[RMDB]
RNA sequence: GGGAACGACUCGAGUAGAGUCGAAAAUCUAAGAGCGUAACACACACUCAGACUGUACGACAGUCUGACACACACAUACGCUAGUGUAUCGUGUGUGUGAUAUCGAUGUAGGACGAAAAUGAAAGAACCAUAAGGCUAUUUUCGAAUAGCCUUAUGGAAAAGAAACAACAACAACAAC
Reactivity to DMS in 0.01 (KOAc 150mM, MgCl2 10mM, bicine 150mM(pH8.5), 24C), signal-to-noise 9, nucleotides 027 to 126: u000c020u000a070a110g000a100g000c030g010u000a060a070c060a060c040a040c070a100c150u000c010a010g010a010c000u000g010u010a140c300g010a140c020a010g000u000c000u000g010a030c210a030c060a020c010a010c010a020u000a020c020g020c210u000a080g020u010g010u000a020u000c140g010u000g010u000g010u000g010u000g000a070u010a060u000c040g010a060u000g010u000a120g000g000a040c050g000a040a060a070a080u010g000a070a090a120g000a090a170
Reactivity to 2A3 in 0.01 (KOAc 150mM, MgCl2 10mM, bicine 150mM(pH8.5), 24C), signal-to-noise 8, nucleotides 027 to 126: u040c040u070a120a030g040a020g120c020g050u070a110a010c010a000c000a000c000a010c060u020c010a000g000a010c000u020g020u160a120c140g150a070c200a000g000u000c000u000g020a000c000a000c000a000c010a000c000a020u050a050c050g090c140u090a130g080u060g030u190a040u060c110g000u010g000u000g000u000g000u000g020a020u040a030u130c070g030a050u060g040u070a040g040g040a020c050g050a050a080a040a070u180g050a090a060a090g050a050a090